[RMDB]
RNA sequence: GGGAACGACUCGAGUAGAGUCGAAAAGGUGCGAAUCACAGUUUGGUCUAAUCCUAGACUGUCUGUGUUCUGUGAGGCAUUCUCAUAAUUGGAACGCGCGCUAGGAUCAGGUACCUUGCGCGAGUUAAGUGUCUGGACCAUUCGUGGUUCAGGCGCUAAAAGAAACAACAACAACAAC
Reactivity to 2A3 in 0.01 (KOAc 150mM, MgCl2 10mM, bicine 150mM(pH8.5), 24C), signal-to-noise 9, nucleotides 027 to 126: g090g020u070g010c020g040a070a030u110c010a010c000a020g020u060u190u260g060g000u000c010u020a060a100u080c030c060u020a010g000a010c000u020g040u040c020u030g060u010g020u050u020c030u030g080u040g050a060g040g050c030a060u160u010c020u000c020a070u110a230a110u120u120g120g030a030a010c010g000c000g000c000g000c050u060a000g000g020a080u120c060a050g110g100u150a080c000c000u000u010g000c000g000c010g000a010g010u010u060a070
Reactivity to DMS in 0.01 (KOAc 150mM, MgCl2 10mM, bicine 150mM(pH8.5), 24C), signal-to-noise 9, nucleotides 027 to 126: g010g020u010g010c030g010a080a060u020c020a010c010a010g000u010u020u030g010g010u000c010u000a040a140u050c200c190u000a020g010a010c010u010g010u020c060u010g010u010g010u010u010c020u010g010u010g000a070g010g010c070a080u010u010c000u000c020a110u040a080a140u030u020g010g010a030a010c010g000c000g010c000g010c000u000a010g000g010a140u030c190a130g010g020u040a050c000c000u000u000g000c000g000c000g000a030g000u000u010a070
Chemical mapping of a 177-nucleotide RNA with 2A3 and DMS. Values are in units of 0.01, from 0 to 300, in steps of 10. The DMS profile rests on 119,696 reads. Conditions: 150 mM KOAc, 10 mM MgCl2 and 150 mM bicine (pH 8.5), 24 C. The 2A3 profile rests on 80,218 reads. DMS adducts were read by reverse transcription with MarathonRT. 2A3 is a SHAPE reagent: it acylates the 2'-hydroxyl of flexible nucleotides of all four kinds. It was measured as part of the RMDB library OK1LIB. 2A3 adducts were read by reverse transcription with SuperScript II with manganese.